Description:
An RNA of 177 nucleotides, treated with DMS and 2A3 and read out base by base. Source: RMDB library OK2TRN, as collected in RNAgym. For 2A3 the reverse transcriptase was SuperScript II with manganese. For 2A3, 4,087 sequencing reads were counted. DMS adducts were read by reverse transcription with MarathonRT. The reactions ran in a buffer of 150 mM KOAc, 10 mM MgCl2 and 150 mM bicine (pH 8.5), at 24 C. Reactivities are given for positions 27 through 126.
RNA sequence: GGGAACGACUCGAGUAGAGUCGAAAAGCCAGCGCAGUGUAUACACAGUGAUCGUAUACGGCCCGGCCGCGCCGAGAGUACGCGCCGUACGUGCGAUCUCUACGAUCCACAGGCCGCGCGCGCGCGAUACUACUGGUGUGUUCGCACACCAGUAGUAAAAAGAAACAACAACAACAAC
Reactivity to DMS in 0.01 (KOAc 150mM, MgCl2 10mM, bicine 150mM(pH8.5), 24C), signal-to-noise 5, nucleotides 027 to 126: g010c010c020a090g010c100g020c030a130g020u010g010u000a020u000a020c020a130c130a250g020u020g000a080u000c150g010u000a020u000a040c010g000g010c010c040c020g010g000c010c040g030c050g010c110c040g000a110g010a130g010u010a090c030g020c050g010c000c100g000u010a030c160g030u000g010c170g000a040u000c010u000c120u010a110c180g000a030u010c020c020a030c060a190g000g000c080c060g000c120g000c030g000c060g010c040g000c050g000a190
Reactivity to 2A3 in 0.01 (KOAc 150mM, MgCl2 10mM, bicine 150mM(pH8.5), 24C), signal-to-noise 3, nucleotides 027 to 126: g020c000c040a010g020c030g010c040a060g060u020g020u210a050u040a030c060a020c030a100g190u110g300a230u200c110g000u010a010u000a050c020g010g000c020c010c010g030g000c080c020g000c000g000c010c040g140a100g010a030g100u130a060c040g000c020g000c000c030g060u100a060c080g000u010g020c090g020a060u000c030u000c060u120a110c100g000a030u050c030c000a020c010a020g050g000c030c000g020c000g000c000g000c020g020c000g000c010g000a010